[RMDB]
RNA sequence: GGGAACGACUCGAGUAGAGUCGAAAAUGGAACUUCAUCUUGCGCAGCGCCUCCAAACUGCUGACCGACUCGUUGUCCUGGGCACUUCCGGUGCACUUCCUGUGGUGAUGAUGGUGGUGGUGCUGCACAUCUAAGCGCAUUUCGAUGCGCUUAGAUGAAAAGAAACAACAACAACAAC
Reactivity to DMS in 0.01 (KOAc 150mM, MgCl2 10mM, bicine 150mM(pH8.5), 24C), signal-to-noise 3, nucleotides 027 to 126: u000g000g010a120a090c150u010u000c090a080u010c050u000u000g010c110g020c010a020g000c020g010c020c010u000c040c020a050a090a090c060u000g000c030u000g000a170c170c010g000a040c080u000c110g000u000u000g000u000c030c030u000g010g010g000c110a050c080u000u000c110c090g010g000u000g000c040a080c110u000u010c020c030u010g020u000g000g010u000g000a050u010g000a100u010g020g030u000g000g020u000g010g010u010g020c010u000g010c040a160
Reactivity to 2A3 in 0.01 (KOAc 150mM, MgCl2 10mM, bicine 150mM(pH8.5), 24C), signal-to-noise 2, nucleotides 027 to 126: u100g040g030a050a020c040u150u060c070a140u030c050u070u130g040c040g000c020a010g000c000g000c020c010u000c000c010a140a170a140c030u100g010c030u030g070a040c000c020g090a060c030u010c040g050u020u040g030u030c010c000u020g000g030g030c060a030c090u160u020c070c050g050g000u030g000c040a050c040u080u070c030c010u040g040u090g030g020u030g010a050u020g010a030u090g050g040u030g000g000u000g000g010u010g000c010u000g020c000a000
About this RNA: The record gives the reactivity of an RNA of 177 nucleotides to DMS and 2A3. The data come from the RNA Mapping Database (RMDB), library OK2TST. The 2A3 profile rests on 6,303 reads. Reactivities are rounded to 0.1 and cut off at 0 and 3.